[RMDB]
RNA sequence: GGGAACGACUCGAGUAGAGUCGAAAACACGUGCGAUUGAGUGAGAAGCCGCCACCAGCACUCUUCGUGAGGUGUCUGCCAAUCUUCUAAUUGUUUAAUGCGAGCCAAGUAAUAAUCCGCAAAAAUCACUACCUACGAAAUUCGUUUCGUAGGUAGUAAAAGAAACAACAACAACAAC
Reactivity to DMS in 0.01 (KOAc 150mM, MgCl2 10mM, bicine 150mM(pH8.5), 24C), signal-to-noise 5, nucleotides 027 to 126: c040a080c100g010u010g000c030g000a080u020u010g000a060g010u000g000a100g020a140a150g010c030c020g010c030c020a060c030c030a070g000c040a050c040u010c040u010u000c070g000u020g010a110g020g000u020g010u010c030u030g010c020c050a040a090u010c060u020u000c050u000a050a140u010u000g000u000u010u010a070a110u010g010c050g000a060g000c050c050a050a060g000u010a060a080u020a090a050u030c010c010g020c090a020a060a070a050a070u030c100
Reactivity to 2A3 in 0.01 (KOAc 150mM, MgCl2 10mM, bicine 150mM(pH8.5), 24C), signal-to-noise 9, nucleotides 027 to 126: c070a010c030g110u080g020c020g040a090u070u110g050a070g050u050g030a070g030a100a010g030c010c020g030c020c000a030c010c020a030g060c020a020c020u040c010u100u070c080g040u050g060a060g020g050u020g010u020c030u020g030c020c010a030a090u020c000u080u020c020u060a090a120u090u060g080u110u100u120a080a040u100g020c020g010a010g010c030c030a110a010g050u060a070a160u060a100a050u030c020c010g000c060a030a090a020a010a050u090c020